[RMDB]
RNA sequence: GGGAACGACUCGAGUAGAGUCGAAAACUAAGGCAGCAACACAUGAUGUCAUGAUUGGUCUUUUUAAAGAAGGAAAAGUAGGACAAUUUGUCACUGGACCGUGGAACAUUAAUGAAUAUCAAGAAACGGCAACAACGUAUUUCGAUACGUUGUUGCCAAAAGAAACAACAACAACAAC
Reactivity to 2A3 in 0.01 (KOAc 150mM, MgCl2 10mM, bicine 150mM(pH8.5), 24C), signal-to-noise 2, nucleotides 027 to 126: c060u020a000a010g000g000c000a000g000c010a110a000c040a030c050a180u070g000a030u020g050u050c000a000u030g100a030u010u020g000g000u030c020u030u150u120u140u170a300a300a260g190a110a170g120g000a040a010a010a000g110u020a020g150g000a010c000a090a100u160u300u300g000u000c000a000c030u000g000g000a000c000c000g000u070g040g000a020a030c030a000u090u190a050a010u200g030a010a000u050a030u120c000a000a090g020a210a080a000c060